[RMDB]
RNA sequence: GGGAACGACUCGAGUAGAGUCGAAAAUCUCCGCUGGAGGUGUCUUCGUGGAAUGCCAUUAAACUCUUGAUAAAAGGCAUAUACAGGGACGAGGUGAUGAAACAAAUCCUCCUGGAAGAGCCUUAUCGCUUGAAAUGCUAUUCGUAGCAUUUCAAGCAAAAGAAACAACAACAACAAC
Reactivity to DMS in 0.01 (KOAc 150mM, MgCl2 10mM, bicine 150mM(pH8.5), 24C), signal-to-noise 3, nucleotides 027 to 126: u010c000u010c000c080g000c130u000g000g020a000g010g000u030g010u000c000u000u050c020g040u010g010g000a100a010u000g020c000c010a110u000u040a040a140a090c090u040c130u080u020g010a080u040a040a030a120a110g000g000c000a000u020a030u060a130c030a090g040g000g000a060c110g000a100g010g040u040g020a110u000g000a130a130a080c110a030a090a130u000c000c020u000c000c000u010g020g000a080a060g000a190g000c000c010u000u010a120u000c200
Reactivity to 2A3 in 0.01 (KOAc 150mM, MgCl2 10mM, bicine 150mM(pH8.5), 24C), signal-to-noise 5, nucleotides 027 to 126: u000c000u000c000c010g020c120u100g040g000a010g040g000u080g100u020c030u090u030c060g090u040g050g240a130a040u040g030c000c000a090u070u150a140a180a100c080u060c020u090u170g070a060u130a110a130a030a030g020g000c010a000u020a000u010a080c020a030g020g000g090a030c070g030a030g080g040u110g020a150u110g080a150a110a020c050a000a100a030u010c000c000u010c000c010u000g000g040a090a060g030a020g060c000c000u090u080a220u180c090